[RMDB]
RNA sequence: GGGAACGACUCGAGUAGAGUCGAAAACAGAAAUGGCCUUGGCUGGGUGCAGUGGUGGCUUAUGCCUGUAAUCCCAACACUUUGAGAAACCGAGGCAGGUGAAUUGCUUGAGCUCAGGAGUUCGAGACCAGCCUGGGCAACAUGGCGAAACCACCUCUAAUCGCCAUAAUUUCGAUUAUGGCGAUUAAAAAGAAACAACAACAACAAC
Reactivity to DMS in 0.01 (KOAc 150mM, MgCl2 10mM, bicine 150mM(pH8.5), 24C), signal-to-noise 2, nucleotides 027 to 156: c040a140g000a040a100a080u010g020g040c000c010u000u030g030g020c040u000g000g000g000u020g000c100a110g040u000g000g040u000g020g030c060u000u010a090u000g020c010c040u010g000u010a080a110u000c000c000c010a070a100c040a050c040u000u010u000g020a180g000a090a100a070c040c040g020a040g020g030c010a060g010g050u000g000a070a200u010u000g000c010u000u000g010a130g030c030u000c000a040g000g000a160g010u010u010c040g030a200g010a090c050c060a100g020c010c000u000g020g020g020c020a020a100c080a180u010g000g010c000g020a050a090a130c030c010a070c050c020u010c080
Reactivity to 2A3 in 0.01 (KOAc 150mM, MgCl2 10mM, bicine 150mM(pH8.5), 24C), signal-to-noise 2, nucleotides 027 to 156: c000a000g110a000a110a110u100g040g000c020c000u080u040g060g000c060u040g030g040g110u190g020c050a030g030u080g040g060u040g010g040c030u140u100a040u190g040c000c000u020g030u010a050a130u050c000c020c010a050a020c060a050c030u110u120u140g080a150g050a120a070a000c110c020g000a030g010g000c050a040g000g000u000g030a120a120u060u070g000c010u010u000g010a010g010c000u000c010a020g010g030a080g010u140u130c150g100a100g060a060c030c010a020g060c000c000u000g000g000g000c010a000a000c030a020u050g030g010c000g000a020a020a030c000c010a000c000c010u000c010

Background: Chemical mapping of a 207-nucleotide RNA with DMS and 2A3. The reactions ran in a buffer of 150 mM KOAc, 10 mM MgCl2 and 150 mM bicine (pH 8.5), at 24 C. For 2A3 the reverse transcriptase was SuperScript II with manganese.